[RMDB]
An RNA of 177 nucleotides, treated with 2A3 and DMS and read out base by base. The reactions ran in a buffer of 150 mM KOAc, 10 mM MgCl2 and 150 mM bicine (pH 8.5), at 24 C. Source: RMDB library M2PK50, as collected in RNAgym. Reactivities are given for positions 27 through 126.

RNA sequence: GGGAACGACUCGAGUAGAGUCGAAAACCCUGGUUAUUCGUAACCAGGGGUUGAGUGAAUCCUCUCAGUGCAUCGGUGGAUCACACGAUACGCAUGGACGACAAUUACGGUUAUUCGUAACCGUAAACUAUGCAUUGACUUUCGAGUCAAUGCAUAGAAAAGAAACAACAACAACAAC
Reactivity to 2A3 in 0.01 (KOAc 150mM, MgCl2 10mM, bicine 150mM(pH8.5), 24C), signal-to-noise 6, nucleotides 027 to 126: c010c000c000u010g000g000u000u020a040u050u080c230g020u020a010a010c000c000a010g030g000g000g000u070u200g030a040g020u100g080a090a080u020c010c000u000c010u010c030a050g030u030g040c010a040u010c060g160g010u050g060g120a150u160c040a020c010a010c090g010a010u060a050c020g000c020a030u040g040g020a020c040g020a020c060a080a070u050u010a010c000g010g010u010u010a020u040u090c240g040u040a010a000c000c000g000u000a010a010a000
Reactivity to DMS in 0.01 (KOAc 150mM, MgCl2 10mM, bicine 150mM(pH8.5), 24C), signal-to-noise 7, nucleotides 027 to 126: c000c000c000u000g000g000u000u000a010u000u010c170g020u000a010a010c000c000a010g010g000g010g010u000u010g010a120g010u010g010a130a120u000c020c010u000c100u010c050a100g010u000g010c040a040u010c030g030g020u000g010g010a150u010c150a060c030a060c030g000a040u000a040c080g010c020a090u000g010g010a050c090g000a060c100a070a120u000u000a010c000g000g000u000u000a020u000u010c200g020u000a010a000c000c000g010u000a000a020a160